[RMDB]
Annotation
Chemical mapping of a 177-nucleotide RNA with 2A3 and DMS. The reactions ran in a buffer of 150 mM KOAc, 10 mM MgCl2 and 150 mM bicine (pH 8.5), at 24 C. For DMS, 1,009 sequencing reads were counted.
RNA sequence: GGGAACGACUCGAGUAGAGUCGAAAAAAAAUAAGGAUAUUGUCCUAUAUGGCUAUGAUGUCAUGAUCACACUGAACAAAAAUAAUGAUUCCUUAAUAUCAUUUAAUAUCAGUCCAUAUUCAAACUGCGUAUGUUAUUCGUUCGCGAAUAACAUACGAAAAGAAACAACAACAACAAC
Reactivity to 2A3 in 0.01 (KOAc 150mM, MgCl2 10mM, bicine 150mM(pH8.5), 24C), signal-to-noise 2, nucleotides 027 to 126: a000a000a000a000u220a050a000g060g020a040u040a090u130u140g020u020c010c000u020a040u000a000u080g010g000c040u080a070u210g040a020u090g060u040c060a020u050g030a030u050c020a040c020a020c130u060g040a070a010c050a050a060a060a020a030u140a050a000u020g020a040u020u070c020c010u140u100a110a030u050a040u110c000a030u020u060u150a080a060u080a040u080c000a000g020u040c010c000a040u050a050u070u110c060a050a110a090c070u120g050
Reactivity to DMS in 0.01 (KOAc 150mM, MgCl2 10mM, bicine 150mM(pH8.5), 24C), signal-to-noise 2, nucleotides 027 to 126: a090a020a070a070u020a020a050g010g000a090u010a090u000u000g000u010c010c000u010a090u000a000u010g010g010c230u010a060u000g010a020u010g000u010c300a080u010g000a120u010c090a080c200a060c130u000g010a040a070c130a010a060a070a080a100u010a030a020u000g010a060u000u000c040c090u040u010a080a090u010a030u000c000a010u000u010u030a040a040u000a020u000c030a020g020u000c000c030a010u000a020u000u000c180a040a090a100c110u010g010
For 2A3 the reverse transcriptase was SuperScript II with manganese. Values cover nucleotides 27 to 126. The 2A3 profile rests on 1,630 reads.